RNA sequence: GGGAACGACUCGAGUAGAGUCGAAAAUUUUUCCUUAUGACAUGGAUUCUGGUGUGUCAUCCUUUAGUGAACUACUUUUUGAUUGCGUUGAUCUUUCAGUAGCUUCUACCUAUUUUUUAGUCCGCAUAAAGCGUUGUGUUCGCACAACGCAAAAGAAACAACAACAACAAC
Reactivity to DMS in 0.01 (KOAc 150mM, MgCl2 10mM, bicine 150mM(pH8.5), 24C), signal-to-noise 4, nucleotides 027 to 129: u020u090u030u020u000c030c000u040u030a080u010g000a070c070a100u000g020g030a140u030u040c060u020g000g000u000g060u050g030u020c090a050u020c110c040u010u030u040a080g020u050g000a070a070c010u050a040c070u010u050u010u010u030g060a070u000u000g040c210g060u010u090g030a100u040c010u070u040u000c080a020g030u040a070g020c130u010u030c060u060a100c180c050u040a030u000u000u000u000u000u000a120g050u030c000c060g000c080a130u030a070a110a120
Reactivity to 2A3 in 0.01 (KOAc 150mM, MgCl2 10mM, bicine 150mM(pH8.5), 24C), signal-to-noise 5, nucleotides 027 to 129: u080u000u000u000u020c000c000u020u070a090u100g030a060c050a030u040g050g000a120u150u080c080u170g080g030u130g010u030g010u030c020a050u070c000c020u130u170u180a070g010u040g030a020a020c010u010a020c000u040u030u030u040u070g040a000u030u050g080c130g110u030u190g030a080u010c000u000u010u010c010a010g000u000a000g010c030u000u000c010u000a070c000c010u000a040u040u070u000u000u030u020a050g000u020c020c020g020c080a020u050a090a080a000